[RMDB]
The record gives the reactivity of an RNA of 177 nucleotides to 2A3 and DMS. Values cover nucleotides 27 to 126. The RNA was probed in 150 mM KOAc, 10 mM MgCl2 and 150 mM bicine (pH 8.5) at 24 C.
RNA sequence: GGGAACGACUCGAGUAGAGUCGAAAAGAUAUGGAAUUUCUUGGACCCACACCGUCUUUGAUCUCGGAAACGAGGGAGACGUGUGUGGCUAGAAAUUCCUAAGUCAAAAGGCCUCUUCGGAGGCCAAGAAGCACAAUAUGUUCGCAUAUUGUGCUUCAAAAGAAACAACAACAACAAC
Reactivity to 2A3 in 0.01 (KOAc 150mM, MgCl2 10mM, bicine 150mM(pH8.5), 24C), signal-to-noise 3, nucleotides 027 to 126: g020a010u090a050u170g000g000a000a030u000u010u020c020u050u170g140g130a240c000c040c000a000c010a000c010c010g050u050c020u190u300u090g130a160u060c000u000c000g070g000a150a090a070c020g000a010g000g020g010a020g000a000c040g030u050g000u000g010u000g020g000c000u000a000g000a000a000a000u000u000c000c000u000a070a010g050u020c020a000a000a060a190g000g000c020c010u020c020u030u110c300g150g000a000g010g000c010c000a000a030
Reactivity to DMS in 0.01 (KOAc 150mM, MgCl2 10mM, bicine 150mM(pH8.5), 24C), signal-to-noise 3, nucleotides 027 to 126: g010a050u000a300u000g000g010a020a010u000u000u000c000u000u000g020g000a200c300c010c010a000c010a010c000c010g010u000c000u000u000u020g010a070u010c010u000c000g000g000a150a080a170c010g010a030g000g000g000a000g010a010c000g020u000g010u000g040u000g010g000c010u000a010g010a000a010a010u000u000c000c000u000a000a060g000u000c040a080a090a170a170g010g010c000c010u000c000u000u010c180g010g000a000g000g000c000c000a000a020
For DMS the reverse transcriptase was MarathonRT.